[RMDB]
RNA sequence: GGGAACGACUCGAGUAGAGUCGAAAAUACGUGACCUUCGGGUCACGUAACCGGCGUUCCCAAGUCAAAAAGAGAGACGGAAUCUCGACAGCGGCCUUUUCGUAUGAGUUGCUUUCGAGCAACUCAACCUCAGGUUACAAUUCGUUGUAACCUGAGGAAAAGAAACAACAACAACAAC
Reactivity to DMS in 0.01 (KOAc 150mM, MgCl2 10mM, bicine 150mM(pH8.5), 24C), signal-to-noise 3, nucleotides 027 to 126: u000a010c010g020u010g020a000c010c000u010u010c160g040g010g010u000c000a000c000g010u000a010a050c090c030g000g010c070g020u000u010c020c000c010a110a180g000u000c120a010a040a090a100a080g010a100g000a070g020a070c090g000g000a060a300u000c020u000c020g010a080c090a090g010c090g000g000c030c030u000u010u020u000c060g020u000a110u000g010a030g010u000u000g010c000u000u010u000c180g000a030g020c000a010a000c000u000c010a050a060
Reactivity to 2A3 in 0.01 (KOAc 150mM, MgCl2 10mM, bicine 150mM(pH8.5), 24C), signal-to-noise 3, nucleotides 027 to 126: u020a000c010g000u010g000a010c000c000u020u040c280g040g020g000u000c000a000c000g000u000a000a000c030c010g080g040c030g010u000u000c010c010c000a000a010g080u080c040a050a020a060a150a070g110a010g010a000g010a030c080g030g120a110a090u030c040u030c030g030a030c040a030g040c020g050g080c020c050u140u140u130u200c090g030u120a080u180g010a010g010u000u010g000c000u040u060u090c230g070a010g000c000a020a000c010u010c000a000a010